[RMDB]
RNA sequence: GGGAACGACUCGAGUAGAGUCGAAAAGGGGUCUGUUUCCCAUUCUCGACGAAGGCAACGGGAGUUCCACUGAAGCCUCCACGGUGGAACGAAGAACGUUGCCAGAGAGAUGUGGAAACAGACGGAGGCACCCAAAAGAGCACGUUCGCGUGCUCAACCACACUCGGUAGUUCGCUACCGAGUGUGGAAAAGAAACAACAACAACAAC
Reactivity to 2A3 in 0.01 (KOAc 150mM, MgCl2 10mM, bicine 150mM(pH8.5), 24C), signal-to-noise 1, nucleotides 027 to 156: g060g000g020g010u030c020u050g000u020u010u010c000c020c000a040u300u100c000u030c020g300a300c050g000a050a000g010g010c000a000a000c000g000g020g060a130g010u010u010c000c000a000c000u040g050a160a000g010c020c000u000c020c000a010c020g010g000u000g000g000a020a010c040g030a030a080g090a040a000c010g000u020u000g000c000c000a000g000a000g000a000g000a000u020g190u300g000g000a010a000a000c010a000g010a000c030g010g000a000g000g000c010a060c020c030c000a100a120a000a050g010a000g020c000a000c020g060u140u170c230g020c090g160u020g000c070u020c000a000a000
Source information: An RNA of 207 nucleotides, treated with 2A3 and read out base by base. It was measured as part of the RMDB library RNAMAK. The 2A3 profile rests on 864 reads. The reactions ran in a buffer of 150 mM KOAc, 10 mM MgCl2 and 150 mM bicine (pH 8.5), at 24 C.